Structure probing data (2A3 and DMS) for a 177-nucleotide construct. The DMS profile rests on 3,680 reads. For 2A3 the reverse transcriptase was SuperScript II with manganese.
RNA sequence: GGGAACGACUCGAGUAGAGUCGAAAACAACGUUUUUAUGUCGGGUUACUUCACGCAGCAUGGCACCGUCGCCGCCGCCGAUAAUCAGCACAUGUUUCGCGUGACCAUGGGCCAGUAGCGGAACAUGACACUCAUCCAGAUUCGUCUGGAUGAGUGUAAAAGAAACAACAACAACAAC
Reactivity to 2A3 in 0.01 (KOAc 150mM, MgCl2 10mM, bicine 150mM(pH8.5), 24C), signal-to-noise 2, nucleotides 027 to 126: c040a000a040c040g010u050u020u030u070u160a150u150g090u070c040g040g000g040u030u090a060c020u040u100c050a030c090g020c030a010g050c010a100u070g040g000c040a020c050c030g030u020c020g020c000c020g030c020c000g010c000c000g030a010u050a030a110u100c060a030g040c090a010c010a090u000g020u000u030u030c040g000c020g030u030g030a020c000c010a160u160g040g060g000c020c020a040g060u050a020g000c020g030g000a010a020c010a010u020g020
Reactivity to DMS in 0.01 (KOAc 150mM, MgCl2 10mM, bicine 150mM(pH8.5), 24C), signal-to-noise 4, nucleotides 027 to 126: c100a100a100c150g010u010u020u000u020u000a050u020g030u010c070g030g000g010u000u000a090c110u000u000c040a060c100g010c040a080g020c030a050u000g000g010c030a090c060c080g000u000c060g010c020c030g010c050c040g010c040c030g020a050u000a050a070u010c130a120g030c140a260c010a020u000g000u010u000u000c040g010c000g020u000g010a060c090c030a100u010g010g000g040c030c040a050g000u000a100g010c010g000g000a010a010c020a030u000g000
The RNA was probed in 150 mM KOAc, 10 mM MgCl2 and 150 mM bicine (pH 8.5) at 24 C. For 2A3, 3,520 sequencing reads were counted.